[RMDB]
RNA sequence: GGGAACGACUCGAGUAGAGUCGAAAACACACAAACACGCCACAUUGUGCAUGUUAUGCAAGAAUGCGUGUUUUACACCAAAACACCUUACAUAUUGCAUUGCAACACUGUUUUUGCGCAAUCAUACACCUCGAUCAUUAUUCGUAAUGAUCGAGGUAAAAGAAACAACAACAACAAC
Reactivity to DMS in 0.01 (KOAc 150mM, MgCl2 10mM, bicine 150mM(pH8.5), 24C), signal-to-noise 4, nucleotides 027 to 126: c040a100c130a060c180a080a090a050c130a050c070g010c010c100a050c150a120u000u010g010u000g040c120a020u000g020u020u010a020u000g000c030a000a010g020a070a060u030g010c200g030u010g000u000u000u000u020a100c200a150c220c070a040a020a050a010c040a000c010c090u010u010a150c120a070u070a120u000u000g000c000a020u020u030g000c000a050a140c090a050c110u000g000u000u000u010u000u000g000c040g020c120a070a090u010c090a060u020a160c160
Reactivity to 2A3 in 0.01 (KOAc 150mM, MgCl2 10mM, bicine 150mM(pH8.5), 24C), signal-to-noise 9, nucleotides 027 to 126: c070a010c020a010c050a020a160a010c080a040c080g060c050c020a070c030a110u040u080g010u010g040c030a020u040g020u170u160a040u020g000c000a010a010g070a110a030u040g040c050g040u000g020u000u000u000u020a030c050a070c020c090a000a020a020a020c010a030c000c020u130u170a070c050a060u110a120u060u030g010c010a020u000u080g000c010a050a020c040a070c120u070g150u110u070u020u120u080g020c040g000c030a020a080u080c030a020u070a110c060

Notes
Structure probing data (DMS and 2A3) for a 177-nucleotide construct. Conditions: 150 mM KOAc, 10 mM MgCl2 and 150 mM bicine (pH 8.5), 24 C. As a SHAPE reagent, 2A3 marks flexible, mostly unpaired nucleotides at the ribose 2'-OH.